[RMDB]
RNA sequence: GGGAACGACUCGAGUAGAGUCGAAAAGAUAUGGACAGUAGGGAGACGUAGGUCGGAAACGACCUAUACGUCAUCGAUCUAUGUCCUAAGUCAAAGAUCUGUGACUGGUUCGCCAGUCACAGAUCAAGUUCAAACGAGUGUUCGCACUCGUUUGAACAAAAGAAACAACAACAACAAC
Reactivity to DMS in 0.01 (KOAc 150mM, MgCl2 10mM, bicine 150mM(pH8.5), 24C), signal-to-noise 2, nucleotides 027 to 126: g000a010u000a290u000g010g000a000c010a070g000u000a020g010g000g000a040g000a020c000g020u000a010g000g010u000c000g020g000a030a090a120c010g030a000c010c000u000a040u000a020c050g030u010c010a170u000c120g000a080u010c000u010a020u000g000u000c000c000u000a030a120g030u010c040a080a130a130g000a000u000c000u000g000u000g030a010c010u000g010g000u000u010c220g050c000c000a000g000u000c010a020c000a000g000a000u010c010a020a060
Reactivity to 2A3 in 0.01 (KOAc 150mM, MgCl2 10mM, bicine 150mM(pH8.5), 24C), signal-to-noise 1, nucleotides 027 to 126: g020a000u040a000u130g000g000a000c000a040g300u150a020g020g060g000a050g000a000c000g000u010a000g030g010u010c000g020g020a020a040a010c020g000a010c000c010u020a130u020a020c000g000u010c000a060u240c000g000a010u010c010u040a010u060g000u000c020c010u020a100a030g070u000c090a170a030a040g000a000u000c000u020g020u000g010a000c000u010g020g050u080u090c230g060c130c020a000g010u000c000a000c000a000g000a010u020c000a000a000